[RMDB]
RNA sequence: GGGAACGACUCGAGUAGAGUCGAAAAGGUCGGUGUUUCGACACCGACCACUUACCGAGAAUGUUCCUCGGUAUAAAAAACAAACCCUUGGAAACAAGGGAAUACGAAUCGUGUUCGCACGAUUCAAGUAAGAGAAUCCUUUCGAGGAUUCUCUUACAAAAGAAACAACAACAACAAC
Reactivity to 2A3 in 0.01 (KOAc 150mM, MgCl2 10mM, bicine 150mM(pH8.5), 24C), signal-to-noise 2, nucleotides 027 to 126: g010g000u000c000g010g010u020g020u040u080u100c170g030a020c000a000c010c010g010a000c000c000a000c000u010u020a010c000c010g000a000g030a060a140u200g040u110u030c030c000u010c010g000g040u020a030u110a020a080a020a010a000a000c070a040a110a040c000c000c000u000u000g010g000a070a030a010c000a010a000g000g000g010a010a010u050a030c060g010a000a010u000c000g010u010g020u050u070c240g000c070a000c000g000a000u000u010c000a000a020
Reactivity to DMS in 0.01 (KOAc 150mM, MgCl2 10mM, bicine 150mM(pH8.5), 24C), signal-to-noise 2, nucleotides 027 to 126: g030g000u000c010g020g030u000g000u000u000u010c180g020a050c010a010c000c000g000a010c000c010a000c090u000u010a040c000c000g000a020g000a120a170u010g030u000u010c060c000u000c040g000g010u010a010u020a000a000a030a030a020a070c150a060a110a120c000c000c000u000u000g000g000a210a030a140c000a010a010g000g010g050a070a010u020a100c170g000a020a000u000c000g040u010g000u020u010c200g010c010a000c010g000a020u000u000c000a060a130
Chemical mapping of a 177-nucleotide RNA with 2A3 and DMS. The DMS profile rests on 1,641 reads. 2A3 adducts were read by reverse transcription with SuperScript II with manganese. The reactions ran in a buffer of 150 mM KOAc, 10 mM MgCl2 and 150 mM bicine (pH 8.5), at 24 C.